[RMDB]
RNA sequence: GGGAACGACUCGAGUAGAGUCGAAAAGAGUCAGUCCAUGAUGAACUUUGAGUUCAACAUUGGCACUCUUGCGGAAGCAGGGUGUCGAGGUUGUUAAAGAGCUGUGGAAAGCGUGAGGCUAGAAAUAGAGCAGCGAAAAGCAGCCGCUUGAAGUGGUACUAUUGAACCAGUUCGCUGGUUCAAUAGUAAAAGAAACAACAACAACAAC
Reactivity to DMS in 0.01 (KOAc 150mM, MgCl2 10mM, bicine 150mM(pH8.5), 24C), signal-to-noise 1, nucleotides 027 to 156: g000a130g000u010c030a080g000u000c000c020a180u000g030a090u000g000a100a090c000u010u000u010g000a020g040u000u000c020a020a010c020a080u010u020g010g030c000a000c000u000c060u000u000g050c000g010g020a130a160g000c010a040g000g000g040u000g010u000c000g010a000g010g020u000u000g000u010u010a020a020a260g000a020g000c000u010g030u010g020g020a200a110a170g000c010g010u000g020a160g010g000c000u010a060g010a140a060a230u000a090g000a060g000c020a120g020c010g000a010a060a130a300g000c020a030g020c000c000g040c020u010u000g000a010a010g000u000g010g030u000
Reactivity to 2A3 in 0.01 (KOAc 150mM, MgCl2 10mM, bicine 150mM(pH8.5), 24C), signal-to-noise 2, nucleotides 027 to 156: g050a010g050u060c040a010g040u000c010c030a060u150g050a100u080g090a060a030c020u030u010u020g020a020g010u060u090c000a010a000c010a020u020u020g000g010c000a000c010u020c000u070u150g020c010g010g130a110a030g000c000a010g000g020g000u000g010u000c010g000a010g010g010u030u000g000u020u020a030a010a000g030a010g000c010u000g020u030g030g090a080a090a030g060c020g030u030g020a020g050g060c020u010a000g070a040a080a030u060a010g050a000g040c020a000g010c010g010a060a000a000a040g000c000a000g000c000c020g010c020u000u010g020a020a020g010u030g080g030u030